[RMDB]
Source: RMDB library TTRDES, as collected in RNAgym. An RNA of 177 nucleotides, treated with 2A3 and DMS and read out base by base. For 2A3 the reverse transcriptase was SuperScript II with manganese. Values cover nucleotides 27 to 126. The RNA was probed in 150 mM KOAc, 10 mM MgCl2 and 150 mM bicine (pH 8.5) at 24 C. DMS adducts were read by reverse transcription with MarathonRT. For DMS, 1,537 sequencing reads were counted.
RNA sequence: GGGAACGACUCGAGUAGAGUCGAAAAGAUAUGGAGCGCAAUGGCUUUUGACGCGUACGGAUCGGAAACGAUCCGAAUACGCGAUAAGCCAGCGCUCCUAAGUCAAAAUCAAGCGUUCGCGCUUGAACUUCAACUGUGAGUUCGCUCACAGUUGAAGAAAAGAAACAACAACAACAAC
Reactivity to 2A3 in 0.01 (KOAc 150mM, MgCl2 10mM, bicine 150mM(pH8.5), 24C), signal-to-noise 2, nucleotides 027 to 126: g020a000u020a040u080g030g010a010g000c030g010c140a300a300u140g000g050c040u050u130u190u300g300a180c240g020c010g010u000a030c000g030g050a010u010c000g000g040a010a040a000c000g000a000u000c000c000g010a000a000u040a000c000g010c050g150a130u090a090a000g000c000c000a000g000c030g000c000u000c000c000u000a000a000g000u000c010a030a020a000a260u060c000a000a020g000c030g050u170u300c300g000c000g000c160u030u010g000a030a120
Reactivity to DMS in 0.01 (KOAc 150mM, MgCl2 10mM, bicine 150mM(pH8.5), 24C), signal-to-noise 1, nucleotides 027 to 126: g010a020u000a250u020g000g000a000g010c010g020c020a110a110u000g010g030c000u000u020u010u000g020a220c080g020c010g000u010a110c010g010g000a000u010c000g010g010a050a010a100c000g000a010u000c020c010g010a050a150u000a020c000g020c000g030a070u000a020a020g000c000c000a020g000c000g020c000u000c000c000u000a000a020g000u020c000a090a120a150a200u000c010a020a010g000c020g020u010u010c300g010c030g000c000u000u000g000a010a190